[RMDB]
RNA sequence: GGGAACGACUCGAGUAGAGUCGAAAAUGAGUCCAAAAGGACGAAACGGAUGUACCGCUUCUUGUCUCGACCUCGACCUGGACUAGUGAUCGAGGGAGGCUCACCUUCACGCCCGCUGAGUAGAUGUCACAUAUCUCUCCUUCGGGAGAGAUAUGUGAAAAGAAACAACAACAACAAC
Reactivity to 2A3 in 0.01 (KOAc 150mM, MgCl2 10mM, bicine 150mM(pH8.5), 24C), signal-to-noise 1, nucleotides 027 to 126: u030g000a020g000u020c020c030a000a070a000a130g000g000a010c020g010a020a020a010c020g000g010a110u180g040u230a200c000c000g030c020u000u000c040u030u160g000u030c090u040c030g160a110c000c000u000c010g010a020c000c010u050g090g140a160c020u030a030g010u080g110a280u020c020g000a000g010g020g000a040g030g010c000u000c020a070c030c090u000u040c050a020c060g050c000c000c000g010c070u060g060a030g050u150a040g020a140u180g120u100